[RMDB]
RNA sequence: GGGAACGACUCGAGUAGAGUCGAAAAAACAUUUAAAGGAUAACUGGGCCAUGAGGGCUCCUCCCUUGCAAAUGGGAUCAGGGGUCCUUGCAAACGGUCUUGACUGAGGGAUUGGUUUUCUGUUGCCUUUCUGCCUUCCACUGUGUGAAGAUACAGAGCUUUUAGCCUCAUUCGUGAGGCUAAAAGCAAAAGAAACAACAACAACAAC
Reactivity to 2A3 in 0.01 (KOAc 150mM, MgCl2 10mM, bicine 150mM(pH8.5), 24C), signal-to-noise 1, nucleotides 027 to 156: a010a000c100a040u100u060u200a190a100a010g120g000a060u110a300a070c100u120g000g000g010c010c010a100u100g010a000g020g000g000c000u000c000c000u090c000c000c000u050u220g130c020a130a160a160u110g010g020g000a060u210c300a010g010g020g000g020u000c000c020u020u000g000c000a040a040a040c060g000g070u010c040u050u080g060a060c020u010g060a010g130g040g000a040u000u100g060g000u080u040u070u000c100u150g090u010u030g060c030c070u060u060u000c000u000g030c000c000u000u050c020c020a080c170u070g050u000g090u070g160a000a040g010a050u130a060c060a040g040a000